[RMDB]
An RNA of 207 nucleotides, treated with 2A3 and read out base by base.
The reactions ran in a buffer of 150 mM KOAc, 10 mM MgCl2 and 150 mM bicine (pH 8.5), at 24 C.
RNA sequence: GGGAACGACUCGAGUAGAGUCGAAAAAUUGAGGGAUAAUACAGGCUCUCCCAUCCAACUCCUAUUCCAACGCGUCCUCGUCGUACAGAGUGGUAACAUGUGUCACCACAUAUCCAAGCUUGGGUACAAAAGCCAACUACGUUCGCGUAGUUGGCAACGGUAUCCAAUGCUUCGGCAUUGGAUACCGAAAAGAAACAACAACAACAAC
Reactivity to 2A3 in 0.01 (KOAc 150mM, MgCl2 10mM, bicine 150mM(pH8.5), 24C), signal-to-noise 1, nucleotides 027 to 156: a000u060u040g010a060g000g010g020a020u130a180a020u080a080c070a060g050g170c020u020c000u010c030c000c000a030u050c000c000a030a030c000u040c020c000u030a110u180u030c070c020a030a030c020g000c010g090u020c040c010u090c020g020u020c030g000u060a090c040a020g150a090g060u000g030g020u090a100a040c030a110u110g150u060g000u140c060a020c060c000a020c000a010u040a020u120c020c010a010a040g020c020u200u120g000g070g010u130a040c040a000a140a040a000g010c000c000a000a000c010u020a000c000g040u000u020c120g080c030g230u020a000g000u000u000g000g030c010a000a000